[RMDB]
RNA sequence: GGGAACGACUCGAGUAGAGUCGAAAAGUACACUUCGGUGUACAGGGAGCGUACUACUUAUUCGAAGAACAUCCGGAGGACAUGGCUUCCCAAAUAGGAAGCCAACAGCCUCUCGUGAUGGGAGAAUAAGUAUCGCGUCUAGUCAAUUCGUUGACAAAUUAUAAACGGGAUUCGUCCCGUUUAUAAUAAAAGAAACAACAACAACAAC
Reactivity to 2A3 in 0.01 (KOAc 150mM, MgCl2 10mM, bicine 150mM(pH8.5), 24C), signal-to-noise 4, nucleotides 027 to 156: g010u010a000c010a000c010u070u210c300g060g010u010g000u000a020c000a010g040g070g050a110g020c010g020u100a100c050u010a010c000u040u000a010u020u000c040g150a300a030g020a120a000c000a000u000c000c000g020g010a000g000g010a030c030a190u060g000g000c000u000u000c010c020c020a190a300a070u300a080g010g000a000a000g000c000c000a000a000c000a000g020c000c000u010c030u030c010g140u260g060a000u010g000g010g000a060g000a000a010u000a000a000g000u020a010u110c000g000c000g030u030c040u030a000g010u030c000a030a050u220u070c130g100u060u010g120a040c070a030a150
Reactivity to DMS in 0.01 (KOAc 150mM, MgCl2 10mM, bicine 150mM(pH8.5), 24C), signal-to-noise 4, nucleotides 027 to 156: g000u000a010c000a020c000u000u000c220g040g010u000g020u010a010c010a090g010g020g000a120g020c010g030u010a100c170u000a020c000u000u000a020u000u000c010g000a130a250g020a130a190c000a010u010c010c020g020g020a030g010g000a030c050a300u020g010g010c000u000u000c000c000c010a030a140a220u000a050g000g010a010a010g010c000c010a020a020c080a150g020c000c000u000c000u000c070g070u000g020a010u000g010g010g010a300g000a040a030u000a010a040g020u000a010u000c030g010c000g000u000c020u000a060g010u000c030a020a080u010u010c110g020u000u000g000a060c020a110a130